[RMDB]
RNA sequence: GGGAACGACUCGAGUAGAGUCGAAAACGGCCGUCGAUGGCGUCGCGGUUGCGUAACCGCACGGGACUGGCGUCGCGGGGCUGGCGGGCAAGGGCUCGCUGGGCGGUACUGCGCUGUUCGGGGGCGCAACUGUCUUGGAGUUCGCUCCAAGACAGUUAAAAGAAACAACAACAACAAC
Reactivity to DMS in 0.01 (KOAc 150mM, MgCl2 10mM, bicine 150mM(pH8.5), 24C), signal-to-noise 3, nucleotides 027 to 126: c090g000g010c000c010g020u000c030g010a070u010g020g020c010g020u000c080g030c020g000g000u010u000g030c190g020u010a070a090c090c010g000c090a060c110g000g000g010a110c090u000g030g010c040g010u010c030g010c030g020g010g000g010c030u010g020g020c030g020g010g000c050a210a120g010g010g010c020u000c020g010c080u000g010g010g010c010g020g000u000a050c120u000g010c020g010c020u000g010u000u000c120g010g000g000g010g000c040g010c070
Reactivity to 2A3 in 0.01 (KOAc 150mM, MgCl2 10mM, bicine 150mM(pH8.5), 24C), signal-to-noise 2, nucleotides 027 to 126: c030g070g000c030c010g140u050c010g050a100u170g100g040c030g000u020c040g000c030g020g110u070u200g080c090g080u060a050a040c010c010g000c080a020c080g020g010g040a040c050u100g090g040c010g010u040c030g000c020g020g020g040g000c040u020g010g000c050g000g000g000c050a190a270g230g120g000c010u000c020g000c000u020g000g020g000c030g000g000u060a120c040u070g010c010g000c020u050g070u150u090c030g090g000g000g000g000c010g000c010
An RNA of 177 nucleotides, treated with DMS and 2A3 and read out base by base. Conditions: 150 mM KOAc, 10 mM MgCl2 and 150 mM bicine (pH 8.5), 24 C. The 2A3 profile rests on 4,037 reads.